Annotation:
This 207-nucleotide RNA was probed chemically with 2A3 and DMS. The 2A3 profile rests on 1,367 reads. Conditions: 150 mM KOAc, 10 mM MgCl2 and 150 mM bicine (pH 8.5), 24 C.
RNA sequence: GGGAACGACUCGAGUAGAGUCGAAAACGAACCUAAAGCGGCAGGAAUGGCGUGAGGCUGGCUUCACAGAGCAGCGAUCACUGCCCGCUUCCAACGGUGGGAGGAUAACAGGCCGCUGCACCAUUAGCCCAACUUAGGGCCCAGAGCCUCACUAUAGGGAAUAUACGAACUUCGGUUCGUAUAUUCCAAAAGAAACAACAACAACAAC
Reactivity to 2A3 in 0.01 (KOAc 150mM, MgCl2 10mM, bicine 150mM(pH8.5), 24C), signal-to-noise 2, nucleotides 027 to 156: c010g010a010a060c000c020u020a040a010a080g050c020g030g050c060a030g000g200a130a090u080g040g000c010g030u010g000a020g000g000c010u020g010g040c040u140u100c140a090c030a150g090a010g040c000a000g000c010g040a060u090c060a080c100u050g000c000c020c000g040c010u000u030c020c050a120a000c050g050g000u050g010g020g000a040g030g010a060u030a220a030c040a050g000g070c030c010g010c000u000g010c030a050c080c000a100u100u120a020g000c010c000c000a050a150c140u150u290a100g000g010g000c040c000c000a050g010a050g050c010c000u040c060a030c040u110a130u090a110g110
Reactivity to DMS in 0.01 (KOAc 150mM, MgCl2 10mM, bicine 150mM(pH8.5), 24C), signal-to-noise 1, nucleotides 027 to 156: c050g020a100a160c020c010u000a110a090a080g030c040g010g000c000a010g030g010a090a140u000g040g060c050g000u010g010a050g010g030c000u010g040g030c070u010u000c110a140c180a250g040a060g020c020a020g020c010g010a090u000c050a250c020u000g040c000c000c040g010c030u010u010c000c120a070a150c230g060g020u000g020g010g010a090g000g000a090u010a060a070c060a100g030g030c020c010g010c020u000g000c000a060c040c030a010u000u000a120g000c000c030c000a070a180c160u000u000a150g000g010g000c000c010c000a080g000a090g010c040c030u000c020a000c020u000a090u010a050g050